[RMDB]
RNA sequence: GGGAACGACUCGAGUAGAGUCGAAAAUUGGUUUCGACCAAAUUACCGCGUACUACUUUCUUUUGACGCUGCAAUGUAUUGAGACUUUCCCAAAUAGGAAAGUCAAUGAUGUAUGACAGCGAUAAGAAAGUAUCGCAUAGUUCAGCUUCGGCUGAAAGGGUAUGGAUAAUUUCGAUUAUCCAUACCCAAAAGAAACAACAACAACAAC
Reactivity to 2A3 in 0.01 (KOAc 150mM, MgCl2 10mM, bicine 150mM(pH8.5), 24C), signal-to-noise 7, nucleotides 027 to 156: u050u020g030g030u040u100u140c220g090a030c040c010a050a000a050u190u130a110c040c040g000c020g020u040a090c030u000a010c000u050u010u010c020u030u070u040u160g220a090c030g010c000u000g010c030a070a230u090g040u050a020u030u070g030a040g000a040c000u000u000u030c000c020c030a140a180a090u280a080g010g000a000a000a000g000u000c000a000a050u150g010a000u020g020u050a040u050g110a120c000a000g000c000g000a010u010a010a000g000a000a000a000g000u000a010u300c000g000c000a020u130a040g100u020u020c000a000g000c010u020u080c170g110g010c000u010g000a030a020a020
Reactivity to DMS in 0.01 (KOAc 150mM, MgCl2 10mM, bicine 150mM(pH8.5), 24C), signal-to-noise 3, nucleotides 027 to 156: u000u010g020g000u000u000u020c100g000a150c000c030a040a090a110u000u000a110c120c070g020c020g030u020a100c100u000a010c010u000u000u010c010u000u000u000u000g000a260c040g020c000u000g030c050a070a040u010g010u000a030u000u000g020a300g000a000c010u000u000u000c000c010c030a040a140a250u000a040g000g000a020a010a010g000u010c010a010a050u000g000a040u000g010u000a050u000g010a120c000a010g020c000g020a140u000a030a050g010a050a010a030g000u000a000u000c000g020c020a240u000a080g000u000u000c010a020g010c020u000u000c300g060g000c030u000g000a030a040a140
An RNA of 207 nucleotides, treated with 2A3 and DMS and read out base by base.
Source: RMDB library RNAMAK, as collected in RNAgym.